[RMDB]
RNA sequence: GGGAACGACUCGAGUAGAGUCGAAAAUUGGUUAUUGGUAAGGUGACCAGAGAAGAUCACGGAGAUCUAGCAAAUUCAUUAAUACGGCUUUAUGCUGAUUCUAGAAAAGCUAAUGAAAGAAUGUCCAAUAAAAGCCUAACUUCGGUUAGGCUUUUAUAAAAGAAACAACAACAACAAC
Reactivity to DMS in 0.01 (KOAc 150mM, MgCl2 10mM, bicine 150mM(pH8.5), 24C), signal-to-noise 2, nucleotides 027 to 126: u020u000g000g010u000u000a040u010u010g040g050u020a060a070g000g050u000g000a060c020c000a170g010a150g000a110a080g000a020u020c010a100c190g010g000a230g000a040u000c040u000a170g000c100a060a060a110u000u020c020a080u000u000a060a080u000a130c200g010g010c030u000u000u010a060u010g000c000u000g000a150u000u000c100u000a060g020a080a030a080a150g010c060u000a030a060u010g010a040a040a070g000a050a060u010g010u010c010c030a130
Record summary:
This 177-nucleotide RNA was probed chemically with DMS. The DMS profile rests on 881 reads. DMS (dimethyl sulfate) methylates the pairing face of unpaired adenines and cytosines.